[RMDB]
RNA sequence: GGGAACGACUCGAGUAGAGUCGAAAAAGUGAAUCCGAUCGUAUUGGGCUACAGCUCUUGACAACACCUCUGUCCGUGACGAUGAGUUAUCCAUCCCGCCGGGAACGGGAAGCGUAGCCUGUUUCUACGUUUUAAUCUGCUUCGGCAGAUUAAAACGAAAAGAAACAACAACAACAAC
Reactivity to DMS in 0.01 (KOAc 150mM, MgCl2 10mM, bicine 150mM(pH8.5), 24C), signal-to-noise 2, nucleotides 027 to 126: a160g000u000g000a140a080u020c070c030g000a060u050c190g020u020a100u000u000g010g000g000c050u000a100c100a080g040c040u000c040u020u000g000a110c100a180a100c160a050c060c040u000c140u020g000u000c030c100g060u010g020a030c130g050a050u000g010a170g010u000u000a040u060c120c010a080u020c030c010c020g020c070c080g000g000g000a160a170c010g020g000g010a040a060g040c050g040u000a030g000c030c010u010g040u000u000u000c040u000a100
Reactivity to 2A3 in 0.01 (KOAc 150mM, MgCl2 10mM, bicine 150mM(pH8.5), 24C), signal-to-noise 2, nucleotides 027 to 126: a010g110u150g050a010a030u050c030c010g060a050u060c040g070u170a170u100u300g000g000g030c010u030a040c030a010g050c000u060c010u090u040g020a020c020a150a070c000a140c050c020u030c000u100g030u030c010c030g050u070g100a090c020g040a000u040g000a000g130u070u120a080u120c000c010a050u050c000c020c000g030c000c010g020g010g000a080a040c040g010g000g000a000a010g000c030g040u010a010g000c000c020u000g000u000u000u080c000u010a020